[RMDB]
RNA sequence: GGGAACGACUCGAGUAGAGUCGAAAAUCGCCAUGAGUAGGACUACGGCCAUAACAUAAUCGACAAAUCCAAGAUGUACUCCUACAAGUAAAGGGAGUUCGAAUAGAGAUUGGUUGUGCCCGAAAGGUACGAUAAAAAUCUUCGGAUUUUUAUCGUAAAAAGAAACAACAACAACAAC
Reactivity to DMS in 0.01 (KOAc 150mM, MgCl2 10mM, bicine 150mM(pH8.5), 24C), signal-to-noise 8, nucleotides 027 to 126: u010c060g000c010c010a110u040g020a110g020u010a060g010g020a200c030u020a070c050g000g000c110c020a020u010a050a080c110a040u030a030a050u010c050g020a110c180a080a110a080u050c070c090a110a080g010a120u040g000u000a020c030u000c020c020u010a110c190a070a140g020u040a050a110a170g000g000g010a040g000u000u010c030g000a040a100u020a090g010a160g000a050u000u000g010g000u000u000g010u000g010c210c000c000g010a060a060a080g000g010
Reactivity to 2A3 in 0.01 (KOAc 150mM, MgCl2 10mM, bicine 150mM(pH8.5), 24C), signal-to-noise 9, nucleotides 027 to 126: u080c040g060c050c000a090u120g070a030g120u130a060g030g050a040c020u060a030c060g000g020c020c010a030u050a080a020c030a060u210a100a070u070c040g060a040c110a040a120a010u060c050c030a090a030g040a120u240g040u040a030c010u000c000c000u050a100c090a180a070g130u220a080a070a110g010g000g000a000g000u020u060c010g030a020a010u060a060g110a010g020a080u010u040g020g000u010u010g010u010g020c000c000c010g030a060a030a000g070g020